RNA sequence: GGGAACGACUCGAGUAGAGUCGAAAAUGCAUGUCGAGGGGAUAUGGAGUGUUACCUGGUAUUUGUCAUGGGUUACCUGGGCGGGCCUACAUUUGUACAUGAGGUGGUGAGGAUGGCAAAAACUCUGCCCUAAGCUGAAAUUCGUUUCAGCUUAGGGAAAAGAAACAACAACAACAAC
Reactivity to 2A3 in 0.01 (KOAc 150mM, MgCl2 10mM, bicine 150mM(pH8.5), 24C), signal-to-noise 4, nucleotides 027 to 126: u050g000c030a020u040g040u100c030g040a060g050g030g010g000a000u030a090u220g050g010a080g040u100g020u040u060a050c000c010u030g020g060u070a120u050u140u120g100u050c070a050u080g110g010g000u060u090a030c020c050u040g040g020g050c040g030g000g060c020c010u040a020c020a080u140u160u200g060u080a010c020a060u090g010a040g010g060u060g020g040u050g030a030g060g010a060u030g020g030c020a020a040a000a040a060c050u030c030u040g060
Reactivity to DMS in 0.01 (KOAc 150mM, MgCl2 10mM, bicine 150mM(pH8.5), 24C), signal-to-noise 4, nucleotides 027 to 126: u020g010c100a060u010g010u000c060g010a100g000g000g000g010a130u010a090u000g010g000a090g020u000g000u000u010a100c040c010u000g010g010u000a100u010u000u000g010u000c080a070u010g000g010g020u010u000a070c040c040u010g010g000g020c110g010g000g000c040c030u010a040c070a070u010u020u010g020u010a070c120a070u000g010a070g020g010u000g010g010u000g000a070g010g000a060u000g000g010c090a030a040a050a040a060c100u000c070u010g000